[RMDB]
RNA sequence: GGGAACGACUCGAGUAGAGUCGAAAAUUGCGAACACUGAACUGGCGCUUUCAGCCGAAAAGGCCGGGCUUUCCGCAGAGCCGGUUCAUUCGGUCGCCAAUGCGCUGAAACUUCUGCACGAUACCUAAUUAAUCCUCGUAUUCGUACGAGGAUUAAUAAAAGAAACAACAACAACAAC
Reactivity to DMS in 0.01 (KOAc 150mM, MgCl2 10mM, bicine 150mM(pH8.5), 24C), signal-to-noise 6, nucleotides 027 to 126: u010u010g020c020g010a040a060c080a070c140u000g000a050a070c100u010g000g000c000g020c100u000u010u010c110a160g000c010c010g000a030a030a110a170g010g010c010c020g010g020g000c090u010u000u010c060c130g020c170a080g010a060g010c000c000g010g000u000u000c040a180u000u000c050g010g020u010c050g010c090c220a040a040u000g000c030g000c010u000g000a070a070a090c090u000u000c020u000g020c060a050c100g010a120u010a090c030c020u000a080
Reactivity to 2A3 in 0.01 (KOAc 150mM, MgCl2 10mM, bicine 150mM(pH8.5), 24C), signal-to-noise 3, nucleotides 027 to 126: u060u040g000c000g010a030a010c060a020c140u060g020a040a000c020u050g030g000c010g020c000u040u100u100c050a010g000c020c010g030a030a060a020a020g050g020c020c000g060g090g030c050u050u070u040c060c040g000c060a010g000a000g020c020c000g020g010u070u070c010a010u030u020c040g000g030u080c010g010c050c010a050a060u110g020c020g000c010u040g010a050a050a040c020u070u030c050u140g000c020a000c050g020a050u060a130c000c010u020a070